[RMDB]
RNA sequence: GGGAACGACUCGAGUAGAGUCGAAAAUGUAUAGUGCAACGGUUUGACUAAGAUGUACAUGAGUGACAUGUAAUACGAUUCGUCGAAUGGUCACUUUUCAUAUGUGCAACGGGAUUUUGACCCCGAGCCCCUUGUCACAAUUCGUUGUGACAAGGGGAAAAGAAACAACAACAACAAC
Reactivity to 2A3 in 0.01 (KOAc 150mM, MgCl2 10mM, bicine 150mM(pH8.5), 24C), signal-to-noise 1, nucleotides 027 to 126: u120g030u010a110u030a150g060u040g020c010a080a070c090g060g000u050u070u100g020a000c010u020a050a040g030a110u110g010u020a010c000a000u010g050a030g140u080g060a010c020a030u070g030u180a070a060u040a180c000g050a060u000u110c080g010u010c040g080a070a040u140g120g000u050c010a000c000u070u050u080u080c060a050u070a020u110g040u010g030c020a080a050c060g000g000g040a040u190u250u120u190g170a250c060c000c010c010g000a030g080
Reactivity to DMS in 0.01 (KOAc 150mM, MgCl2 10mM, bicine 150mM(pH8.5), 24C), signal-to-noise 2, nucleotides 027 to 126: u000g010u000a060u000a040g030u000g000c030a070a050c070g010g010u000u000u010g000a040c040u000a070a120g000a120u010g020u000a000c020a010u010g020a160g010u000g040a070c010a050u010g000u000a070a120u020a120c000g000a080u000u030c130g000u000c020g000a110a050u020g000g000u010c000a020c000u000u000u010u010c130a050u000a060u000g010u010g000c020a110a130c100g000g000g020a100u000u000u000u000g010a210c160c020c000c080g010a180g000